[RMDB]
RNA sequence: GGGAACGACUCGAGUAGAGUCGAAAAAAACUUUUGUGACUUGCUGAAACGGGACUAAUCUCCUCACCGAGGCUAAGCAAGUAAAAUACGCCUCUAAUAUCCUUACCUGAGGGUGGUAAGGAAAUAACCUGCAACGCUUCCUUCGGGAAGCGUUGAACCAACUAUAAACCUUCGGGUUUAUAGUUGGAAAAGAAACAACAACAACAAC
Reactivity to 2A3 in 0.01 (KOAc 150mM, MgCl2 10mM, bicine 150mM(pH8.5), 24C), signal-to-noise 2, nucleotides 027 to 156: a000a000a000c200u220u150u060u130g090u050g080a080c010u010u000g020c010u040g060a060a060a060c050g010g000g010a010c020u070a040a150u070c030u030c020c020u050c030a030c000c060g000a020g030g000c030u040a060a000g000c010a010a030g050u130a050a040a000a000u080a040c030g000c010c000u000c000u030a170a030u070a040u130c000c000u000u000a010c000c010u060g050a090g000g060g060u060g000g000u010a000a000g000g020a000a000a000u010a010a040c020c060u110g010c010a000a000c000g000c010u000u010c000c000u050u050c130g040g000g000a000a000g000c010g000u000u000g000a000a010
An RNA of 207 nucleotides, treated with 2A3 and read out base by base. The RNA was probed in 150 mM KOAc, 10 mM MgCl2 and 150 mM bicine (pH 8.5) at 24 C. 2A3 adducts were read by reverse transcription with SuperScript II with manganese.